[RMDB]
Background: The data come from the RNA Mapping Database (RMDB), library M2RFOK. Structure probing data (2A3) for a 207-nucleotide construct. Values cover nucleotides 27 to 156. For 2A3 the reverse transcriptase was SuperScript II with manganese.
RNA sequence: GGGAACGACUCGAGUAGAGUCGAAAAGCUCUGGAAUUGAGCCCCCUCUAACAAUAAUCCAAAACUACUUCGCAGAGUAAUCUGCCGAAUCGUAGGAUGCCCAUUACUAUCUAUUUUUGGAGCAUCUAAAACUGUCAGUGCUUCGGCACUGACAGAAGAUUGAAGCCAUGUUCGCAUGGCUUCAAUCAAAAGAAACAACAACAACAAC
Reactivity to 2A3 in 0.01 (KOAc 150mM, MgCl2 10mM, bicine 150mM(pH8.5), 24C), signal-to-noise 2, nucleotides 027 to 156: g010c010u010c030u030g030g120a240a120u200u070g000a020g000c000c000c000c020c000u050c110u140a130a100c090a140a080u160a020a090u110c020c010a000a120a050a140c030u030a010c020u000u000c000g000c000a020g000a010g030u120a090a220u040c010u000g060c120c060g000a010a010u040c050g000u040a020g040g050a010u000g020c010c000c000a010u040u000a090c080u140a140u170c070u040a300u130u110u010u000u040g010g000a090g010c000a000u020c010u080a030a030a030a080c000u000g000u010c000a000g000u000g000c000u010u000c110g100g000c010a000c010u020g000a000c000a000g000a000a010